[RMDB]
RNA sequence: GGGAACGACUCGAGUAGAGUCGAAAAACACGUGCUCCAAAAGAGCACAGAGAGCCGCAUAUAACUGGCUCGACUGAUGCGGCUCAAAUCGAGCCAUGUAAAGACAGCGGGAAAACCGCUGUCGAAACGACAUGGAGGUCUUCGGACCUUCAUGUCGAAAAGAAACAACAACAACAAC
Reactivity to DMS in 0.01 (KOAc 150mM, MgCl2 10mM, bicine 150mM(pH8.5), 24C), signal-to-noise 4, nucleotides 027 to 126: a070c070a170c120g010u000g000c000u010c010c030a090a150a150a300g000a010g020c010a000c000a120g000a200g000a000g020c010c000g000c020a040u000a090u050a080a080c160u010g010g000c000u000c010g030a160c240u000g000a040u010g010c000g000g000c000u010c000a040a110a060u020c060g000a000g000c010c010a130u080g000u030a030a080a140g000a010c000a030g000c000g000g000g010a070a050a090a090c010c000g020c000u000g020u000c000g000a010a060a080
Reactivity to 2A3 in 0.01 (KOAc 150mM, MgCl2 10mM, bicine 150mM(pH8.5), 24C), signal-to-noise 7, nucleotides 027 to 126: a000c080a020c100g010u000g000c010u000c010c000a000a040a050a050g010a000g010c010a000c010a000g050a000g000a000g010c000c010g040c080a020u190a010u080a210a160c110u080g020g000c000u000c000g030a050c080u160g000a020u050g000c000g000g000c000u030c100a070a090a020u140c050g000a000g010c040c000a060u140g130u130a050a100a000g000a000c000a000g000c010g020g020g050a070a180a070a050c000c000g000c000u000g000u000c000g000a000a000a000
This 177-nucleotide RNA was probed chemically with DMS and 2A3. The DMS profile rests on 8,186 reads. Conditions: 150 mM KOAc, 10 mM MgCl2 and 150 mM bicine (pH 8.5), 24 C.